[RMDB]
RNA sequence: GGGAACGACUCGAGUAGAGUCGAAAAGAUACCGACGGAAUUUCAGACAAGCCAAAGGGUAAUAGCUUUGGUUGACCUACACCGAAAAGGAAAUAGGUGUCGUUGGUUGAGUGAGAAAGCAUUAAAUACUUAACUAAUGGUUCGCCAUUAGUUAAGUAAAAGAAACAACAACAACAAC
Reactivity to 2A3 in 0.01 (KOAc 150mM, MgCl2 10mM, bicine 150mM(pH8.5), 24C), signal-to-noise 9, nucleotides 027 to 126: g060a020u110a020c000c000g010a010c010g020g040a130a150u070u180u220c070a090g020a070c040a080a020g030c000c000a000a000a000g030g010g000u020a020a020u030a050g040c000u000u000u000g000g000u020u040g020a010c000c000u020a010c010a020c030c010g070a170a080a050a050g110g040a040a050a030u070a020g000g000u010g010u020c010g010u000u010g010g000u020u030g030a070g050u100g020a060g100a080a080a000g060c050a040u090u170a050a080a040u050
Reactivity to DMS in 0.01 (KOAc 150mM, MgCl2 10mM, bicine 150mM(pH8.5), 24C), signal-to-noise 9, nucleotides 027 to 126: g000a130u010a030c010c000g020a050c040g000g020a110a100u020u020u020c090a070g000a110c120a150a070g000c000c000a010a010a010g000g010g010u000a080a050u040a300g010c000u000u000u000g010g010u010u000g010a090c100c020u010a030c080a240c010c000g000a070a070a080a110g010g010a050a070a180u010a060g010g010u000g010u000c020g010u000u000g000g010u000u010g000a120g010u020g000a100g010a090a070a080g020c120a070u020u010a090a070a120u000
Conditions: 150 mM KOAc, 10 mM MgCl2 and 150 mM bicine (pH 8.5), 24 C. Structure probing data (2A3 and DMS) for a 177-nucleotide construct. For 2A3 the reverse transcriptase was SuperScript II with manganese. Reactivities are rounded to 0.1 and cut off at 0 and 3. Source: RMDB libraries RFM100 and RFMREP, as collected in RNAgym.